[RMDB]
RNA sequence: GGGAACGACUCGAGUAGAGUCGAAAACUUCCCUCCUCCGCUCAGUUGCUUCUUCUUGUUCUCGAGGGCCUUCCUUCUUCGGUGAUCCUGCCUCUCUUUGUCGGUGAAUCCUCCCCUGGUGGGUCCCUUUCUAGGUCCGGAGUCUACUUCCAUUCGGCUACUACAUUGUCUUCGGACAAUGUAGUAGAAAAGAAACAACAACAACAAC
Reactivity to 2A3 in 0.01 (KOAc 150mM, MgCl2 10mM, bicine 150mM(pH8.5), 24C), signal-to-noise 1, nucleotides 027 to 156: c010u030u030c010c000c010u020c000c030u040c020c010g050c050u100c070a080g000u100u050g000c020u070u050c010u120u080c030u120u060g050u130u030c050u050c030g080a070g010g050g000c000c010u070u000c020c010u060u050c010u140u080c030g040g050u030g080a130u090c000c010u060g000c000c000u070c010u000c010u120u100u160g100u200c060g030g020u030g130a050a110u020c000c030u010c000c000c000c000u000g020g020u010g010g000g000u010c000c020c020u000u200u010c090u060a040g000g050u000c020c010g010g000a020g000u000c010u020a080c050u090u000c020c020a080u090u040c040g020g000

An RNA of 207 nucleotides, treated with 2A3 and read out base by base.
Source: RMDB library VIROID, as collected in RNAgym.
The 2A3 profile rests on 635 reads.
The RNA was probed in 150 mM KOAc, 10 mM MgCl2 and 150 mM bicine (pH 8.5) at 24 C.
Values are in units of 0.01, from 0 to 300, in steps of 10.